[RMDB]
RNA sequence: GGGAACGACUCGAGUAGAGUCGAAAAGCAACUUCUUAGAGGGACAAGUGGCGUUCAGCCACGCGAGACUGAGCAAUAACAGGUCUGUGAUGCCCUUAGAUGUCCGGGGCUGCACGCGCGCCACAAUGGGCGGAUCAACGUGUGCCUACCCUGCGCCGGAGAACUAUCACUUCGGUGAUAGUUCUCCAAAAGAAACAACAACAACAAC
Reactivity to 2A3 in 0.01 (KOAc 150mM, MgCl2 10mM, bicine 150mM(pH8.5), 24C), signal-to-noise 2, nucleotides 027 to 156: g000c000a040a030c030u000u000c000u030u130a040g000a120g010g030g000a000c130a260a020g030u000g000g030c070g100u170u300c230a010g000c000c000a000c000g010c010g070a030g010a040c030u080g030a000g090c100a030a190u110a160a030c100a070g060g120u000c010u050g100u050g000a050u140g070c000c000c030u000u000a010g030a030u020g100u070c050c050g030g000g020g040c020u000g000c000a000c000g000c000g010c000g000c000c000a060c090a060a300u170g200g030g070c050g020g050a090u280c010a040a100c030g000u000g010u000g000c000c000u130a150c000c000c010u010g020c020g080c000c020

Description
Structure probing data (2A3) for a 207-nucleotide construct. The data come from the RNA Mapping Database (RMDB), library PDB130. For 2A3 the reverse transcriptase was SuperScript II with manganese.